[RMDB]
RNA sequence: GGGAACGACUCGAGUAGAGUCGAAAACAUGCGCGUCCGAAGUAUGGUCUGCAUACGUAGUCACGGGCCCUUCCGCUCGGUUGUGUGGAUCUCGAAUUCUAAAUCUUACGAUUGAGCCUCGGCGCGGUCUACGCAGCCUGUUCGCGGGUUGUGUAGAAAAAGAAACAACAACAACAAC
Reactivity to DMS in 0.01 (KOAc 150mM, MgCl2 10mM, bicine 150mM(pH8.5), 24C), signal-to-noise 9, nucleotides 027 to 126: c080a080u040g000c010g010c010g010u030c010c010g010a050a080g020u010a070u020g000g010u010c020u000g010c020a040u010a040c100g010u020a080g010u030c130a190c030g000g000g000c020c080c130u020u030c110c160g000c020u000c020g000g010u010u010g010u000g010u000g000g000a020u000c010u010c170g000a100a100u030u020c070u020a060a030a020u010c020u020u040a130c170g000a020u000u000g000a100g000c150c050u000c030g010g000c010g010c020g000g000
Reactivity to 2A3 in 0.01 (KOAc 150mM, MgCl2 10mM, bicine 150mM(pH8.5), 24C), signal-to-noise 9, nucleotides 027 to 126: c050a040u180g020c010g000c010g070u120c020c010g010a050a010g040u090a080u220g020g010u030c020u030g020c010a020u030a090c070g150u130a030g080u100c060a020c130g010g000g000c020c020c000u140u040c030c020g000c000u000c000g020g000u080u010g000u000g010u020g020g000a010u000c030u030c070g070a050a070u140u020c030u110a060a050a070u020c020u080u150a050c080g020a030u010u050g030a010g010c000c010u010c010g000g000c000g000c000g000g010